[RMDB]
RNA sequence: GGGAACGACUCGAGUAGAGUCGAAAAUUUUGGCUUGUUCUUCUACUAGCUUAUAGAGAAUGGUACGAAUAUCGGCGAUAUUUGUAAGCUCAAUCUGUUUGUUCAAAAAUUCAAUACUACGCGUUGCUUCAUCAACAUCUCGCUCUUUCAUCGUUAAGAGACGGAUUAAAUUCGUUUAAUCCGUCUCAAAAGAAACAACAACAACAAC
Reactivity to DMS in 0.01 (KOAc 150mM, MgCl2 10mM, bicine 150mM(pH8.5), 24C), signal-to-noise 1, nucleotides 027 to 156: u000u000u000u020g000g000c060u000u000g040u000u000c020u010u000c050u000a100c070u000a150g010c050u000u000a080u000a110g030a110g000a070a100u000g000g030u000a090c040g030a060a070u000a080u000c040g050g050c100g010a210u000a050u010u000u020g000u010a040a130g000c030u010c070a090a160u000c040u000g010u010u020u010g020u000u000c050a020a070a080a050a160u000u000c050a040a070u010a080c070u020a050c030g020c030g000u000u000g000c030u000u000c100a060u020c030a050a060c020a070u000c030u000c010g020c030u010c030u000u000u010c070a120u010c060g030u000u010a130a290
Reactivity to 2A3 in 0.01 (KOAc 150mM, MgCl2 10mM, bicine 150mM(pH8.5), 24C), signal-to-noise 2, nucleotides 027 to 156: u070u070u030u040g060g000c030u010u080g020u030u060c040u090u020c030u020a080c000u010a070g030c020u120u070a040u110a200g110a020g040a070a100u130g070g020u080a050c050g000a050a020u060a030u110c100g070g000c120g020a000u000a050u040u080u030g050u040a000a000g010c000u010c030a030a040u010c070u040g100u060u150u030g080u030u100c080a040a020a050a120a110u120u100c000a060a000u060a090c070u050a030c070g020c070g100u010u030g000c040u040u080c010a090u030c030a020a080c000a090u010c020u000c020g030c030u010c000u040u040u040c020a130u070c040g020u070u000a080a000